[RMDB]
RNA sequence: GGGAACGACUCGAGUAGAGUCGAAAAGAUAUGGAUCGCAUCAGGACAUGCUUUCGACUCGGAAACGAGUUUCGAGCAACAGCCUGUGCGAUCCUAAGUCAAACCUUGGUCGUUCGCGACCAAGGAAGCCAAGUACUACGUUCGCGUAGUACUUGGCAAAAGAAACAACAACAACAAC
Reactivity to 2A3 in 0.01 (KOAc 150mM, MgCl2 10mM, bicine 150mM(pH8.5), 24C), signal-to-noise 2, nucleotides 027 to 126: g020a000u020a010u080g000g000a000u000c000g000c000a090u290c110a300g030g030a010c080a230u300g010c000u030u010u030c010g010a000c000u010c030g030g040a020a010a000c000g000a000g010u000u040u010c000g000a000g030c050a120a130c130a060g050c000c000u010g010u000g000c010g010a000u000c000c000u020a030a000g000u000c010a010a040a300c010c000u000u000g000g030u010c020g030u060u070c300g000c000g140a000c000c000a000a000g000g010a020a000
Reactivity to DMS in 0.01 (KOAc 150mM, MgCl2 10mM, bicine 150mM(pH8.5), 24C), signal-to-noise 2, nucleotides 027 to 126: g000a010u000a090u000g000g000a000u000c000g000c000a030u010c070a000g030g010a040c140a230u010g000c000u020u000u000c250g000a030c000u000c000g030g000a030a050a100c000g000a020g000u000u000u000c130g000a010g010c020a100a110c220a140g000c000c020u000g000u000g000c000g040a000u010c000c000u000a000a070g010u010c020a190a160a220c010c000u000u000g020g020u000c000g050u000u020c270g010c020g000a010c010c000a030a000g000g020a020a080